Structure probing data (DMS and 2A3) for a 207-nucleotide construct. Source: RMDB library OK3TST, as collected in RNAgym. Values cover nucleotides 27 to 156. The 2A3 profile rests on 3,057 reads.
RNA sequence: GGGAACGACUCGAGUAGAGUCGAAAAAGUUUGUAUAAGCACUGUUUAAUCAUCCCAGUGCAUGCCAAUUGGUGUUUACAGACGAGUAUGGUAUUGACCAUAUGAUACUAUUCUCUCUCUCAGGAGAGGAGAAUAGAUAACUACAAAGGAUGAACAAACCAUAUGAGCAUUUCGAUGCUCAUAUGGUAAAAGAAACAACAACAACAAC
Reactivity to DMS in 0.01 (KOAc 150mM, MgCl2 10mM, bicine 150mM(pH8.5), 24C), signal-to-noise 2, nucleotides 027 to 156: a150g000u010u000u020g010u010a100u000a090a180g010c020a020c000u000g000u000u000u000a120a140u000c050a070u000c030c020c000a130g000u000g040c020a170u000g010c020c030a130a190u000u000g020g030u000g000u010u000u000a140c030a080g010a130c070g110a190g050u000a030u000g000g020u020a210u000u000g010a050c000c000a050u000a010u000g010a250u000a090c010u000a000u000u000c000u000c000u000c000u000c000u000c100a200g010g000a060g000a000g030g000a000g030a040a020u000a010g010a100u000a060a150c160u000a170c070a050a090a160g010g020a050u000g010a020a140c070a090a130
Reactivity to 2A3 in 0.01 (KOAc 150mM, MgCl2 10mM, bicine 150mM(pH8.5), 24C), signal-to-noise 4, nucleotides 027 to 156: a000g050u060u030u010g050u020a080u040a180a060g010c000a000c000u000g060u070u120u130a110a050u010c000a000u010c000c000c000a000g000u000g000c030a010u090g000c020c020a280a300u170u300g000g000u060g030u070u060u050a030c010a000g020a020c020g010a020g030u010a010u010g010g020u060a140u230u300g160a070c000c000a000u000a020u040g050a020u040a070c000u010a010u010u000c000u000c000u000c000u000c010u010c140a150g060g170a010g050a010g080g020a000g000a000a000u000a000g000a010u060a020a070c080u130a040c140a070a070a010g000g000a000u000g000a040a020c050a070a120